[RMDB]
Structure probing data (2A3 and DMS) for a 177-nucleotide construct. DMS (dimethyl sulfate) methylates the pairing face of unpaired adenines and cytosines. Values are in units of 0.01, from 0 to 300, in steps of 10.

RNA sequence: GGGAACGACUCGAGUAGAGUCGAAAAGUUCAAAAGUGAUUUACUGGAACAUCGUUAGAUGUUCCUUGUAUAACGAAUCAGCGAUGAACUGAUUCCUAAAGUGAGAUGUAAAUGAAGAUCGUGUACAUCCACAUUUCAUCUUCGGAUGAAAUGUGGAAAAAGAAACAACAACAACAAC
Reactivity to 2A3 in 0.01 (KOAc 150mM, MgCl2 10mM, bicine 150mM(pH8.5), 24C), signal-to-noise 2, nucleotides 027 to 126: g010u000u000c000a000a000a080a030g170u050g010a020u030u040u120a010c020u030g030g000a000a000c000a000u000c030g120u250u220a090g010a000u020g020u010u000c000c000u000u050g020u010a020u030a110a130c110g000a000a020u030c000a010g300c000g050a050u000g010a000a000c010u030g000a090u000u050c010c040u030a070a000a000g240u160g090a030g010a090u080g050u150a110a120a180u160g070a180a010g010a140u100c100g060u080g010u140a080c030a110
Reactivity to DMS in 0.01 (KOAc 150mM, MgCl2 10mM, bicine 150mM(pH8.5), 24C), signal-to-noise 3, nucleotides 027 to 126: g030u000u000c010a000a030a220a300g010u000g000a010u000u010u000a040c050u000g000g000a000a020c000a000u000c000g000u000u030a090g010a010u000g030u000u000c010c000u010u000g020u010a120u000a100a140c300g000a030a010u000c000a040g000c010g010a300u010g000a030a000c010u000g000a250u010u000c000c000u000a040a110a080g000u020g000a080g000a040u000g000u010a010a050a070u010g000a070a090g000a050u000c080g030u010g010u000a030c130a070

The data come from the RNA Mapping Database (RMDB), library OK2TST. For DMS the reverse transcriptase was MarathonRT. Conditions: 150 mM KOAc, 10 mM MgCl2 and 150 mM bicine (pH 8.5), 24 C.